[RMDB]
RNA sequence: GGGAACGACUCGAGUAGAGUCGAAAAGAAAAAGUCGUCGAGUCCGGAGAAUAUCGGUAGUGGAUACGAUCCGGAGAGUAUCGACUACAAAGAUAUCGAGACGAAAGUCUCGAGAGACGACGAAAAAGGGUAAUAUAUGGUUCGCCAUAUAUUACCCAAAAGAAACAACAACAACAAC
Reactivity to 2A3 in 0.01 (KOAc 150mM, MgCl2 10mM, bicine 150mM(pH8.5), 24C), signal-to-noise 4, nucleotides 027 to 126: g060a010a100a010a000a010g010u010c010g000u000c000g020a040g100u010c010c020g040g010a050g010a040a040u020a000u020c020g070g030u160a030g040u070g200g010a000u000a000c010g010a030u000c000c020g010g010a010g010a010g000u020a010u020c040g030a010c000u010a010c010a010a110a010g010a010u030a000u010c000g000a000g000a000c020g070a060a010a040g000u000c000u000c010g000a000g010a000g000a000c020g000a000c010g040a030a020a000a020a000
Reactivity to DMS in 0.01 (KOAc 150mM, MgCl2 10mM, bicine 150mM(pH8.5), 24C), signal-to-noise 6, nucleotides 027 to 126: g010a070a060a080a140a080g000u000c010g030u000c000g000a300g000u000c000c000g000g000a050g000a260a110u010a000u010c000g030g030u030a110g000u050g000g010a000u000a000c090g010a200u000c000c000g010g000a010g010a100g020u000a010u000c010g010a140c130u030a070c190a080a070a090g010a010u000a040u000c000g010a020g020a000c000g000a140a100a130g010u000c000u000c000g000a040g000a220g000a010c000g010a010c000g020a020a020a100a120a090